[RMDB]
RNA sequence: GGGAACGACUCGAGUAGAGUCGAAAAAUUCACUGGGGUCGACAACUCUGGGGAGAAAAGGGAGGAUCGGAUGGGAAGAGUAUAUCCUACGGGAAUCCCCGGUCUCCCCUCGUGUCCAGCCCGUCCCGGAACGAUAUUACUUCGGUAAUAUCGUUCCAAAAGAAACAACAACAACAAC
Reactivity to DMS in 0.01 (KOAc 150mM, MgCl2 10mM, bicine 150mM(pH8.5), 24C), signal-to-noise 2, nucleotides 027 to 126: a100u000u000c110a080c120u010g030g000g020g000u000c300g010a020c070a020a070c030u050c060u000g010g020g010g020a020g000a000a070a080a090g000g000g000a010g000g000a270u000c010g010g010a130u020g010g000g000a020a050g000a210g020u010a110u000a010u030c000c000u010a080c020g000g000g020a300a150u000c020c000c000c080g000g010u000c000u000c000c000c000c000u000c050g000u000g000u000c030c120a060g000c010c000c020g010u000c030c010c020
Reactivity to 2A3 in 0.01 (KOAc 150mM, MgCl2 10mM, bicine 150mM(pH8.5), 24C), signal-to-noise 1, nucleotides 027 to 126: a000u130u080c020a020c160u080g000g000g030g070u080c020g020a010c000a220a080c070u050c080u140g000g010g010g000a000g000a000a040a010a000g010g040g000a050g000g000a020u050c020g050g120a090u180g050g050g000a050a040g110a080g300u040a050u020a050u200c000c000u000a010c020g000g000g020a000a090u000c010c000c030c020g000g120u030c000u000c000c000c000c000u010c000g000u010g000u040c000c040a000g000c010c000c000g020u000c020c030c000
Structure probing data (DMS and 2A3) for a 177-nucleotide construct.
For 2A3 the reverse transcriptase was SuperScript II with manganese.
Source: RMDB library VIROID, as collected in RNAgym.
The reactions ran in a buffer of 150 mM KOAc, 10 mM MgCl2 and 150 mM bicine (pH 8.5), at 24 C.